[RMDB]
RNA sequence: GGGAACGACUCGAGUAGAGUCGAAAACUUACGCCUCUUGGAUGAGGUUGGCCUCGACGUCGCCUGUCACGUGGGGCCGGUACUGGCCAACGGCCUGAAGAGCGACCGCUUCAGCGUCAGCGCGACCAUAGGGUCCAUAGUUCGCUAUGGACCCUAUAAAAGAAACAACAACAACAAC
Reactivity to DMS in 0.01 (KOAc 150mM, MgCl2 10mM, bicine 150mM(pH8.5), 24C), signal-to-noise 3, nucleotides 027 to 126: c090u000u030a040c170g040c020c000u000c010u000u000g040g020a160u010g000a030g000g010u000u000g000g020c010c010u010c090g020a060c220g020u000c020g000c010c020u020g000u000c170a070c000g000u000g000g000g000g000c010c020g040g020u010a030c110u020g000g000c030c010a160a300c090g000g030c010c000u020g000a100a050g000a100g010c030g040a020c210c150g000c030u010u000c030a160g000c030g020u000c000a000g000c150g010c000g020a050c050c280
Reactivity to 2A3 in 0.01 (KOAc 150mM, MgCl2 10mM, bicine 150mM(pH8.5), 24C), signal-to-noise 5, nucleotides 027 to 126: c010u070u080a080c060g050c030c020u040c080u130u200g300g030a300u180g060a060g000g000u030u130g020g020c030c040u110c130g130a090c060g020u010c000g000c020c030u070g100u190c110a020c050g030u070g020g080g000g000c000c030g010g010u140a070c030u040g030g000c000c020a110a020c040g020g000c000c020u050g080a120a040g010a010g080c110g100a130c060c030g010c000u060u020c020a030g020c000g060u020c020a020g020c020g000c000g130a000c000c010